[RMDB]
RNA sequence: GGGAACGACUCGAGUAGAGUCGAAAACUCUGCAUAUUCGUAUGCAGAGAAAUAACGGUCGGCUCAUGCAGCUAGUCGAACAUGCUGCACGACCUUUUGGUAAAAACCGGAGGUUCGCCUCCGGUAACAAUGCGCAAUCAUUCGUGAUUGCGCAUUGAAAAGAAACAACAACAACAAC
Reactivity to 2A3 in 0.01 (KOAc 150mM, MgCl2 10mM, bicine 150mM(pH8.5), 24C), signal-to-noise 1, nucleotides 027 to 126: c000u040c010u040g010c000a010u030a030u090u150c200g110u030a010u000g000c000a010g010a000g000a020a080a010u090a030a010c060g000g010u000c000g000g030c050u020c130a090u090g000c000a010g000c010u050a040g130u170c110g030a070a030c010a050u170g000c000u010g000c010a020c040g020a000c000c000u020u120u060u120g080g000u100a060a060a000a030a000c000c010g000g000a010g040g010u030u080c190g120c050c000u010c030c040g000g000u000a000a000
Reactivity to DMS in 0.01 (KOAc 150mM, MgCl2 10mM, bicine 150mM(pH8.5), 24C), signal-to-noise 3, nucleotides 027 to 126: c000u000c000u000g000c000a020u000a020u000u010c190g010u000a000u000g000c000a010g010a000g010a060a030a060u010a060a050c190g010g000u000c000g000g000c070u010c150a240u000g000c010a080g030c010u000a210g000u000c210g010a090a240c090a050u010g000c010u000g000c000a060c010g020a000c000c000u000u000u000u000g010g000u010a080a050a040a060a070c010c000g010g000a010g010g020u000u010c220g030c000c000u000c010c000g010g000u000a000a060

This 177-nucleotide RNA was probed chemically with 2A3 and DMS. Reactivities are rounded to 0.1 and cut off at 0 and 3. For 2A3, 1,160 sequencing reads were counted. The DMS profile rests on 2,288 reads. The data come from the RNA Mapping Database (RMDB), library M2PK50. DMS adducts were read by reverse transcription with MarathonRT. 2A3 adducts were read by reverse transcription with SuperScript II with manganese.